[RMDB]
RNA sequence: GGGAACGACUCGAGUAGAGUCGAAAAAAAGAUUAUGGUUUUACUGUUUUUGUGUGCACAGACAACUCUGCUAACACUAAAGUUCUUAGGAACAAGGGUGUUGAUUAUACUAAGAAGUUUCUUACAGAUCCUCAACCCUUCGGGGUUGAGAAAAGAAACAACAACAACAAC
Reactivity to DMS in 0.01 (KOAc 150mM, MgCl2 10mM, bicine 150mM(pH8.5), 24C), signal-to-noise 1, nucleotides 027 to 129: a040a230a120g030a050u000u000a000u110g000g000u000u000u070u070a120c120u000g070u000u000u110u000u000g000u030g000u000g080c050a110c030a000g060a050c300a070a000c000u000c000u000g000c000u000a100a030c200a000c000u050a050a050a050g000u000u030c030u000u000a170g050g130a120a050c000a090a070g000g030g000u010g000u020u020g000a050u000u000a090u060a030c300u010a050a110g140a010a110g030u000u140u000c050u020u120a010c250a000g010a220u000c030
Reactivity to 2A3 in 0.01 (KOAc 150mM, MgCl2 10mM, bicine 150mM(pH8.5), 24C), signal-to-noise 1, nucleotides 027 to 129: a000a010a000g160a000u080u140a050u080g160g060u000u000u000u130a040c080u000g040u040u170u050u120u150g030u000g030u080g000c110a020c000a000g000a000c000a180a000c000u100c080u040g130c100u060a030a030c020a000c040u080a000a000a270g000u000u110c000u000u150a010g000g000a000a000c110a010a010g300g000g000u000g100u040u000g160a030u000u060a290u040a000c180u000a000a000g000a060a060g070u000u090u000c000u000u000a080c000a180g000a000u020c000
An RNA of 170 nucleotides, treated with DMS and 2A3 and read out base by base. The reactions ran in a buffer of 150 mM KOAc, 10 mM MgCl2 and 150 mM bicine (pH 8.5), at 24 C. Values cover nucleotides 27 to 129.